[RMDB]
RNA sequence: GGGAACGACUCGAGUAGAGUCGAAAAGAUAUGGAUGUGUCACAGCUAGCUAGGUAUCGGAAACGAUACUUAGCUUGGACCUGUACACAUCCUAAGUCAAAGAAACCUAUCUUCGGAUAGGUUUCAAGUUACUCUGUAUCUUCGGAUACAGAGUAACAAAAGAAACAACAACAACAAC
Reactivity to 2A3 in 0.01 (KOAc 150mM, MgCl2 10mM, bicine 150mM(pH8.5), 24C), signal-to-noise 3, nucleotides 027 to 126: g010a010u020a020u090g010g000a000u010g030u020g010u140c300a030c000a070g030c110u300a030g000c000u010a000g040g010u010a000u010c010g000g000a010a000a000c010g000a010u000a000c000u000u000a000g000c020u000u010g010g040a090c000c020u000g000u020a000c000a000c000a000u000c000c000u000a010a000g010u000c020a100a080a160g010a010a020a000c000c010u010a000u000c010u050u150c300g120g000a000u000a000g010g000u000u000u010c000a000a000
Reactivity to DMS in 0.01 (KOAc 150mM, MgCl2 10mM, bicine 150mM(pH8.5), 24C), signal-to-noise 4, nucleotides 027 to 126: g000a020u000a140u010g000g010a020u000g020u000g000u000c290a010c010a000g000c110u010a050g020c000u000a000g000g010u000a010u010c000g010g000a040a030a060c000g010a010u000a000c000u000u000a000g000c010u000u010g030g000a120c300c020u000g010u000a020c000a000c000a010u000c000c000u000a000a060g000u000c010a130a150a220g010a010a010a010c000c000u000a000u000c000u000u010c280g020g000a020u000a000g000g000u000u000u000c000a070a110
This 177-nucleotide RNA was probed chemically with 2A3 and DMS.
The reactions ran in a buffer of 150 mM KOAc, 10 mM MgCl2 and 150 mM bicine (pH 8.5), at 24 C.
For 2A3 the reverse transcriptase was SuperScript II with manganese.
The 2A3 profile rests on 12,398 reads.
The data come from the RNA Mapping Database (RMDB), library TTRDES.
For DMS, 7,635 sequencing reads were counted.